This 207-nucleotide RNA was probed chemically with 2A3. 2A3 adducts were read by reverse transcription with SuperScript II with manganese. The RNA was probed in 150 mM KOAc, 10 mM MgCl2 and 150 mM bicine (pH 8.5) at 24 C. The data come from the RNA Mapping Database (RMDB), library M2RFPK.
[RMDB]
RNA sequence: GGGAACGACUCGAGUAGAGUCGAAAAGUCUCCUACAGAGCUUGGCCGUCGGGCCUUACACCCCGACUUGCUGAGUUUCUCUAGGAGAGUCCCUUUCCCAGCCAGAGGUGGCUGGUCAAACAAUACCAAAACUCUUGCUAGUUCGCUAGCAAGAGAAGGAUUUACAUUGGUUCGCCAAUGUAAAUCCAAAAGAAACAACAACAACAAC
Reactivity to 2A3 in 0.01 (KOAc 150mM, MgCl2 10mM, bicine 150mM(pH8.5), 24C), signal-to-noise 1, nucleotides 027 to 156: g000u000c000u000c000c000u000a000c000a020g000a000g010c000u010u010g010g000c020c020g020u000c010g000g040g000c000c000u040u100a070c050a010c040c020c020c010g000a000c040u070u250g000c010u020g000a000g020u090u300u010c000u000c000u000a000g010g000a010g010a000g000u010c000c000c000u010u100u030c010c000c000a000g000c000c000a000g000a010g000g010u000g000g000c020u070g050g010u140c020a000a010a010c070a040a080u010a010c000c000a000a020a070a130c000u000c000u000u010g010c000u010a010g020u090u010c170g010c070u000a000g000c000a000a000g000a000g000a000a060